[RMDB]
RNA sequence: GGGAACGACUCGAGUAGAGUCGAAAAUGAAGCGAUUGAGCUGGGAAAUUAGUAUGAGGUUGGAAAUGGUCGAUGUGUUGUAUUACACAGUAGACAACACUGCUGUAACCGCUACGGUGAGGUUAUGGACUGGUCAUAAGUUCGCUUAUGACCAGUCAAAAGAAACAACAACAACAAC
Reactivity to DMS in 0.01 (KOAc 150mM, MgCl2 10mM, bicine 150mM(pH8.5), 24C), signal-to-noise 4, nucleotides 027 to 126: u020g020a080a060g010c040g020a100u030u040g000a120g020c030u010g010g020g000a070a080a080u020u020a090g020u030a060u020g030a090g000g010u000u020g010g010a060a090a090u010g010g010u010c060g000a100u020g000u000g010u000u000g000u010a050u030u000a020c060a070c120a090g010u010a080g000a050c040a030a040c070a050c010u000g000c040u020g020u000a070a110c010c020g030c070u010a070c130g010g020u010g010a070g010g010u020u020a040u000g000
Reactivity to 2A3 in 0.01 (KOAc 150mM, MgCl2 10mM, bicine 150mM(pH8.5), 24C), signal-to-noise 4, nucleotides 027 to 126: u120g020a020a000g050c050g080a070u040u100g070a080g020c020u040g000g000g010a040a050a060u130u050a060g070u050a070u270g080a070g080g030u030u050g060g030a050a060a140u130g060g030u060c030g030a060u050g010u000g000u010u030g030u030a180u120u080a020c170a000c010a080g080u090a020g020a000c010a010a010c010a000c000u030g040c020u020g010u070a020a020c010c010g030c070u030a040c100g010g000u030g030a020g040g020u030u010a030u150g040
Structure probing data (DMS and 2A3) for a 177-nucleotide construct. Values cover nucleotides 27 to 126. It was measured as part of the RMDB libraries RFM100 and RFMREP. DMS adducts were read by reverse transcription with MarathonRT. The RNA was probed in 150 mM KOAc, 10 mM MgCl2 and 150 mM bicine (pH 8.5) at 24 C.